RNA sequence: GGGAACGACUCGAGUAGAGUCGAAAACAUUGAAUCAGGUCAACUGGAGACGUGGAUUUAUCGCACAGUGGAAGAGCACAAACCAUUGGUUUGGGUCUCGCAUCCGUUAAUUGGUCCUUGAAAACCGCCUGUGCUGUGUAUUCGUACACAGCACAGGAAAAGAAACAACAACAACAAC
Reactivity to 2A3 in 0.01 (KOAc 150mM, MgCl2 10mM, bicine 150mM(pH8.5), 24C), signal-to-noise 5, nucleotides 027 to 126: c040a050u150u200g090a040a070u060c020a020g050g060u030c020a050a040c080u080g070g000a040g010a070c010g050u080g030g010a070u020u150u120a170u160c080g010c070a040c030a120g040u110g020g060a170a070g030a020g060c030a000c010a040a000a050c000c020a140u060u300g030g010u030u020u040g010g000g040u030c000u010c010g000c000a070u010c000c030g050u040u060a090a020u050u050g040g000u040c020c020u010u050g040a040a050a000a070c050c040g010
Reactivity to DMS in 0.01 (KOAc 150mM, MgCl2 10mM, bicine 150mM(pH8.5), 24C), signal-to-noise 3, nucleotides 027 to 126: c100a080u000u000g000a060a070u000c050a050g040g040u010c040a050a110c060u020g000g000a040g010a080c030g010u040g000g010a110u010u040u000a080u020c100g000c070a090c090a030g020u000g000g020a120a060g040a040g020c070a150c050a030a030a060c020c000a210u000u020g000g030u000u000u000g000g010g030u010c020u010c040g030c180a110u000c000c010g000u000u010a010a090u040u000g000g000u000c000c000u000u000g030a070a080a100a130c020c190g000
Conditions: 150 mM KOAc, 10 mM MgCl2 and 150 mM bicine (pH 8.5), 24 C. Chemical mapping of a 177-nucleotide RNA with 2A3 and DMS. 2A3 is a SHAPE reagent: it acylates the 2'-hydroxyl of flexible nucleotides of all four kinds. The data come from the RNA Mapping Database (RMDB), libraries RFM100 and RFMREP. DMS adducts were read by reverse transcription with MarathonRT.